Chemical mapping of a 177-nucleotide RNA with 2A3 and DMS.
The reactions ran in a buffer of 150 mM KOAc, 10 mM MgCl2 and 150 mM bicine (pH 8.5), at 24 C.
For 2A3, 1,121 sequencing reads were counted.
DMS adducts were read by reverse transcription with MarathonRT.

RNA sequence: GGGAACGACUCGAGUAGAGUCGAAAAAAUAGCGGGUCAAGGUACAACGCAGAGAGAUAGGCUCAUCCCAAGUUCUCUUCGGAGUACGAAGACUUCGGUACAGAAGAGAUACCGACUCUUCAUAGAACAUCCAACGGUAUUUCGAUACCGUUGGAUGAAAAGAAACAACAACAACAAC
Reactivity to 2A3 in 0.01 (KOAc 150mM, MgCl2 10mM, bicine 150mM(pH8.5), 24C), signal-to-noise 1, nucleotides 027 to 126: a010a010u190a010g050c040g000g000g030u010c040a100a100g040g000u010a040c020a040a010c060g000c030a040g020a000g000a000g040a070u110a160g090g000c010u020c050a100u050c030c000c010a000a030g040u020u040c000u000c000u000u010c010g030g000a050g000u010a020c020g040a030a020g030a030c000u180u080c040g020g030u100a020c060a030g070a060a000g010a020g040a040u070a070c000c010g030a040c010u010c000u040u020c000a000u060a080g080a010a000
Reactivity to DMS in 0.01 (KOAc 150mM, MgCl2 10mM, bicine 150mM(pH8.5), 24C), signal-to-noise 2, nucleotides 027 to 126: a100a000u000a080g030c000g000g040g010u000c030a020a070g020g000u000a000c030a020a140c030g010c140a010g000a030g000a020g000a110u000a150g020g000c040u000c300a080u000c270c000c000a070a110g030u000u010c010u000c000u010u010c010g000g000a280g000u000a000c040g010a050a100g010a000c040u000u010c070g000g030u000a110c150a120g020a060a020g040a010g000a090u000a150c030c000g000a080c260u000c000u000u000c030a060u000a040g000a090a160